This 207-nucleotide RNA was probed chemically with 2A3. Source: RMDB library OK3TST, as collected in RNAgym.

RNA sequence: GGGAACGACUCGAGUAGAGUCGAAAAACGGGACUGGAUCGUACUGUCGUAUGACCGUGAAGCACCUAUCCCAUCUGGGGUACGAGCUCGCCUCGAUGCAAUGCGGUUAGACGUAAUGGAUCGAUCAUUGGGGAGAUUGCUGUCACAAGCACGACGAAAUCCGUACGAUCUUCGGAUCGUACGGAUUAAAAGAAACAACAACAACAAC
Reactivity to 2A3 in 0.01 (KOAc 150mM, MgCl2 10mM, bicine 150mM(pH8.5), 24C), signal-to-noise 1, nucleotides 027 to 156: a000c010g000g000g060a110c070u070g000g020a030u000c050g010u030a090c060u080g070u140c030g000u070a030u050g000a000c000c000g010u100g040a090a040g020c000a000c040c070u080a100u130c080c000c020a200u170c290u300g020g010g010g010u010a020c000g080a000g000c050u120c280g100c100c020u000c000g030a050u050g020c010a000a120u180g010c000g000g010u000u000a040g070a000c000g080u060a080a050u030g050g010a140u130c000g000a000u010c010a050u050u080g000g000g000g000a030g010a050u010u180g000c030u000g050u030c000a010c010a040a010g010c060a040c060g090a020c000g030a030